This 207-nucleotide RNA was probed chemically with 2A3.
Reactivities are rounded to 0.1 and cut off at 0 and 3.
Conditions: 150 mM KOAc, 10 mM MgCl2 and 150 mM bicine (pH 8.5), 24 C.
Source: RMDB library M2RFPK, as collected in RNAgym.
The 2A3 profile rests on 691 reads.
RNA sequence: GGGAACGACUCGAGUAGAGUCGAAAAAGCCGAGGACUACGGUCCUCGGCAACAACCGUCACAACGGCUUCCUGGCGUGACGGGGUUAACCCCAACGGAGCAAGUGGGAGCUUACGAGCUCGCACAAUUUAGGAGAAUUCCUUCGGGAAUUCUCCAAGAUUUAUCCGUACUUCGGUACGGAUAAAUCAAAAGAAACAACAACAACAAC
Reactivity to 2A3 in 0.01 (KOAc 150mM, MgCl2 10mM, bicine 150mM(pH8.5), 24C), signal-to-noise 1, nucleotides 027 to 156: a000g000c000c000g010a010g020g000a010c010u030a020c240g140g000u020c000c000u010c000g010g000c010a010a000c000a000a010c000c000g000u000c000a000c010a050a020c030g070g000c040u280u170c020c060u050g040g010c030g000u010g000a000c000g000g000g000g000u160u130a030a040c010c000c000c000a060a060c070g040g000a040g010c040a170a030g060u000g000g190g000a000g000c000u000u040a100c200g100a010g010c000u020c060g130c030a020c000a030a100u140u220u290a100g000g010a000g000a000a010u000u000c000c010u010u050c270g030g000g000a000a000u000u000c000u010c000c000a010a010